[RMDB]
RNA sequence: GGGAACGACUCGAGUAGAGUCGAAAAUGAACCUCUCAGAGAUGAAAUUGCAGGGCAAAAAUAUGAAAUCUAAGGAGAUGCAGUUGCCUAAAAAGAAGUGACACAACACAAACAUUUGCUUACCUGGGGCAUAUGGCAUACCUAGGCACUGUUAAGACUAGUGCGGUUCAUUCGUGAACCGCACUAGAAAAGAAACAACAACAACAAC
Reactivity to 2A3 in 0.01 (KOAc 150mM, MgCl2 10mM, bicine 150mM(pH8.5), 24C), signal-to-noise 2, nucleotides 027 to 156: u100g010a000a050c010c000u030c010u010c000a020g020a000g010a110u030g030a090a070a060u150u100g000c070a030g040g020g000c050a090a070a060a070a000u150a080u210g080a070a110a040u050c030u120a120a000g050g020a090g000a000u050g030c000a020g030u140u070g000c000c020u070a040a040a030a050a080g110a100a010g040u030g050a040c010a040c040a080a210c070a070c020a020a180a000c010a050u030u020u050g030c010u030u070a150c010c010u020g000g000g000g000c000a000u010a020u030g060g000c010a020u100a140c000c050u000a010g000g000c010a000c000u010g040u090u080a020a000g070a020
Source: RMDB library OK3TST, as collected in RNAgym. An RNA of 207 nucleotides, treated with 2A3 and read out base by base. 2A3 adducts were read by reverse transcription with SuperScript II with manganese. Reactivities are given for positions 27 through 156.